RNA sequence: GGGAACGACUCGAGUAGAGUCGAAAAGUAUCCAUGUUCGCAUGGAUACGAAAUAUGCGCGCGUAUAUCCGGUUGGCUGGAUGCGCGCGUCUCGCUGGCCGGUGGUGCUAGUCUUCGGACUAGCAAAGAUGCCUAUCUACUUCGGUAGAUAGGCAUCAAAAGAAACAACAACAACAAC
Reactivity to DMS in 0.01 (KOAc 150mM, MgCl2 10mM, bicine 150mM(pH8.5), 24C), signal-to-noise 3, nucleotides 027 to 126: g010u000a000u000c000c000a000u000g010u000u020c230g030c000a010u000g000g000a000u000a000c000g000a060a080a090u010a080u010g000c020g010c010g000c010g020u000a050u010a090u010c010c000g010g010u000u010g010g020c030u010g020g010a030u000g000c010g000c010g010c000g010u000c030u010c110g020c030u000g000g010c020c020g010g020u000g010g010u010g010c000u000a000g000u000c000u000u000c190g040g000a010c000u000a000g010c000a020a060a100
Reactivity to 2A3 in 0.01 (KOAc 150mM, MgCl2 10mM, bicine 150mM(pH8.5), 24C), signal-to-noise 3, nucleotides 027 to 126: g000u010a010u000c010c020a000u010g020u010u080c210g000c110a000u010g000g000a000u000a010c000g000a010a020a000u250a090u140g010c000g000c010g000c010g040u030a080u010a070u290c030c000g070g030u190u230g260g080c060u080g070g000a010u010g000c010g000c000g000c000g000u000c000u010c010g050c030u040g040g010c030c030g070g020u080g030g070u060g020c000u000a010g010u000c000u010u050c200g050g000a000c000u000a000g000c000a000a000a020

An RNA of 177 nucleotides, treated with DMS and 2A3 and read out base by base. Values cover nucleotides 27 to 126. The DMS profile rests on 4,630 reads. 2A3 adducts were read by reverse transcription with SuperScript II with manganese. The 2A3 profile rests on 4,659 reads. The reactions ran in a buffer of 150 mM KOAc, 10 mM MgCl2 and 150 mM bicine (pH 8.5), at 24 C.